The data come from the RNA Mapping Database (RMDB), library VIROID. An RNA of 207 nucleotides, treated with 2A3 and read out base by base. For 2A3, 402 sequencing reads were counted.
[RMDB]
RNA sequence: GGGAACGACUCGAGUAGAGUCGAAAACGGAGUCUACUUCCAUUCGGUCCGUUCGGGGCCUCUUCGCCGGAGGGGCUCCUUCUCCAUCCUUAUCCUUUUUUCCAAUAAUUCCUUUGAUGUUUCCUAGCCAGGGAUUGUCGUCCUCAAGUUUCUUGAUCAAUUACACCUGGUUCGCCAGGUGUAAUUGAAAAGAAACAACAACAACAAC
Reactivity to 2A3 in 0.01 (KOAc 150mM, MgCl2 10mM, bicine 150mM(pH8.5), 24C), signal-to-noise 1, nucleotides 027 to 156: c040g060g020a040g000u040c040u130a060c020u300u010c080c060a150u090u120c120g050g000u030c010c010g100u080u150c110g010g010g010g000c080c000u000c030u100u130c070g090c070c110g000g010a000g000g000g000g000c020u030c000c000u020u000c020u030c000c000a080u050c010c020u080u050a070u250c020c020u150u170u020u050u140u060c050c000a070a060u080a030a130u040u160c020c000u080u060u130g090a090u110g120u010u050u060c000c000u010a080g050c020c000a040g000g000g010a050u020u090g020u020c000g020u020c000c000u130c050a090a080g000u000u040u000c010u150u000g220a300u120